Chemical mapping of a 177-nucleotide RNA with DMS and 2A3. For DMS the reverse transcriptase was MarathonRT. The DMS profile rests on 1,282 reads. 2A3 adducts were read by reverse transcription with SuperScript II with manganese. For 2A3, 1,694 sequencing reads were counted. Conditions: 150 mM KOAc, 10 mM MgCl2 and 150 mM bicine (pH 8.5), 24 C.

RNA sequence: GGGAACGACUCGAGUAGAGUCGAAAACAAGGAUGGAAAUGAUUAACAAUCCAAGUACAGCAUAAAUAAACGUUCUUGUUGUUUACAUCAUUGAUAUUCCUUUCAAUCUAUUAAAUUUUAUUUUUCCACUAUAAUAUGAGUUCGCUCAUAUUAUAGUAAAAGAAACAACAACAACAAC
Reactivity to DMS in 0.01 (KOAc 150mM, MgCl2 10mM, bicine 150mM(pH8.5), 24C), signal-to-noise 2, nucleotides 027 to 126: c130a020a030g000g010a020u000g000g010a120a030a020u000g010a010u000u010a030a050c030a020a070u000c260c030a010a020g010u000a030c020a090g050c120a130u000a020a060a150u030a090a120a080c120g000u000u000c010u000u000g000u000u000g000u000u000u010a040c200a100u000c010a000u000u000g010a220u000a050u000u000c000c000u010u000u000c040a030a070u010c040u000a090u030u020a070a090a190u000u000u010u000a110u000u070u000u000u000c000c020
Reactivity to 2A3 in 0.01 (KOAc 150mM, MgCl2 10mM, bicine 150mM(pH8.5), 24C), signal-to-noise 3, nucleotides 027 to 126: c060a000a000g010g000a020u030g010g070a010a000a000u020g000a000u030u070a000a020c000a010a020u050c070c010a040a000g050u010a000c000a040g070c000a060u120a220a230a020u140a070a230a070c130g000u020u010c000u010u000g000u000u000g040u040u060u040a060c060a010u000c000a010u000u000g020a020u030a070u140u140c010c040u060u080u060c010a020a040u030c020u130a300u300u210a300a220a300u260u300u160u090a150u040u160u030u060u020c010c000